An RNA of 177 nucleotides, treated with 2A3 and DMS and read out base by base. For DMS the reverse transcriptase was MarathonRT. For 2A3 the reverse transcriptase was SuperScript II with manganese. It was measured as part of the RMDB library OK2TST. The reactions ran in a buffer of 150 mM KOAc, 10 mM MgCl2 and 150 mM bicine (pH 8.5), at 24 C.
RNA sequence: GGGAACGACUCGAGUAGAGUCGAAAAAUAUCAAAUUUAAGGAAGAAGAGCUUAUUUCUCUUUUUAACGAGGUUUUAGCUAACGGAUAUUUGGGUGAAUAUGAGGAUAAAUAAGCUCAUAUUUAAAAACUACUAUGACGAUUCGUCGUCAUAGUAGUAAAAGAAACAACAACAACAAC
Reactivity to 2A3 in 0.01 (KOAc 150mM, MgCl2 10mM, bicine 150mM(pH8.5), 24C), signal-to-noise 1, nucleotides 027 to 126: a000u080a000u070c020a020a130a110u150u230u290a070a010g060g040a020a110g010a010a060g020a020g040c000u000u000a000u010u080u030c010u020c000u150u110u070u030u150a030a000c060g000a080g000g070u000u140u120u140a000g000c040u030a050a050c010g160g060a030u050a040u090u140u110g130g040g010u160g060a030a040u100a030u130g000a010g000g000a000u080a120a150a000u030a000a080g010c000u040c010a000u030a040u050u080u030a050a050a000a000
Reactivity to DMS in 0.01 (KOAc 150mM, MgCl2 10mM, bicine 150mM(pH8.5), 24C), signal-to-noise 2, nucleotides 027 to 126: a050u000a030u000c020a090a100a080u000u010u010a060a200g000g020a090a120g010a080a120g000a020g010c190u020u020a010u000u000u000c020u000c010u000u000u000u000u020a090a070c150g000a200g030g000u000u000u000u000a180g000c060u000a060a060c130g010g010a020u000a030u010u000u020g010g000g000u000g000a030a040u000a020u000g000a040g010g000a110u010a040a030a110u000a040a060g000c000u000c000a040u010a060u000u000u010a030a020a030a110